[RMDB]
This 177-nucleotide RNA was probed chemically with 2A3 and DMS. Values cover nucleotides 27 to 126. 2A3 adducts were read by reverse transcription with SuperScript II with manganese. For DMS the reverse transcriptase was MarathonRT. The data come from the RNA Mapping Database (RMDB), library OK1LIB. High DMS reactivity at an A or C suggests that its Watson-Crick edge is free.
RNA sequence: GGGAACGACUCGAGUAGAGUCGAAAAACAUGAAUUUGCACAUAUAAGCAAUGCAGAUGCUUAUUUUAUCUGUAAAGUCUAUAGCAUUAAGGAAGGAAUGAGAAAGGAUAAUAUUAAAGAUAGUGAACAUUAAUAGUAGCUUCGGCUACUAUUAAUGAAAAGAAACAACAACAACAAC
Reactivity to 2A3 in 0.01 (KOAc 150mM, MgCl2 10mM, bicine 150mM(pH8.5), 24C), signal-to-noise 7, nucleotides 027 to 126: a010c080a080u130g060a060a090u090u050u100g030c040a030c030a030u180a030u030a130a040g010c010a050a080u180g000c020a050g040a090u050g010c030u060u040a110u100u230u110u080a010u000c020u000g060u070a030a040a030g020u000c030u070a060u120a060g030c030a030u070u110a030a030g030g040a030a030g040g040a060a040u060g020a030g060a090a020a010g020g010a010u030a140a040u060a100u100u250a080a070a000g080a050u100a050g120u040g070a030a020
Reactivity to DMS in 0.01 (KOAc 150mM, MgCl2 10mM, bicine 150mM(pH8.5), 24C), signal-to-noise 5, nucleotides 027 to 126: a070c120a080u020g000a080a060u000u000u000g000c030a060c110a120u030a020u000a030a030g000c010a050a120u010g000c160a070g010a080u010g000c090u020u010a070u010u010u020u020a030u010c060u010g010u010a020a020a120g010u020c010u000a080u020a090g010c050a040u010u010a040a060g000g010a080a040g000g000a090a020u000g000a060g020a050a050a090g000g000a080u010a030a060u020a060u010u000a060a060a070g010a090u020a050g010u010g000a080a120